[RMDB]
RNA sequence: GGGAACGACUCGAGUAGAGUCGAAAACGUCAAGGAUUCGUCCUUGACGAAAGUCGCGGCUUGAGGGCGUAUACGGCUGCGCACACUCACGACCCUCAAGCCAAACAGGUGGAUUCGUCCACCUGAAUCAACGUUGUAACUUCGGUUACAACGUUGAAAAAGAAACAACAACAACAAC
Reactivity to 2A3 in 0.01 (KOAc 150mM, MgCl2 10mM, bicine 150mM(pH8.5), 24C), signal-to-noise 3, nucleotides 027 to 126: c000g000u010c000a000a010g010g000a010u040u100c220g050u000c060c000u000u000g000a000c010g000a010a000a000g030u000c030g030c120g140g020c000u000u000g000a000g000g010g000c030g020u030a060u010a070c050g050g000c030u060g060c050g000c010a060c020a030c050u110c000a050c010g300a300c000c000c000u000c000a020a000g010c010c000a000a000a010c000a000g000g000u010g000g010a030u050u050c180g060u020c050c000a000c000c000u000g020a000a070
Reactivity to DMS in 0.01 (KOAc 150mM, MgCl2 10mM, bicine 150mM(pH8.5), 24C), signal-to-noise 3, nucleotides 027 to 126: c000g010u000c000a000a000g000g010a010u000u010c230g030u000c000c000u000u000g000a010c000g000a020a050a070g050u000c040g030c300g000g000c000u000u000g000a030g010g000g000c010g000u000a050u010a080c070g000g020c030u010g000c030g050c060a130c200a080c030u000c050a060c050g020a070c040c000c000u000c000a010a000g010c010c010a010a040a150c010a000g000g030u000g010g000a030u000u010c230g010u010c000c000a000c000c000u000g000a070a080
Chemical mapping of a 177-nucleotide RNA with 2A3 and DMS. The DMS profile rests on 2,490 reads. The 2A3 profile rests on 5,373 reads. 2A3 adducts were read by reverse transcription with SuperScript II with manganese.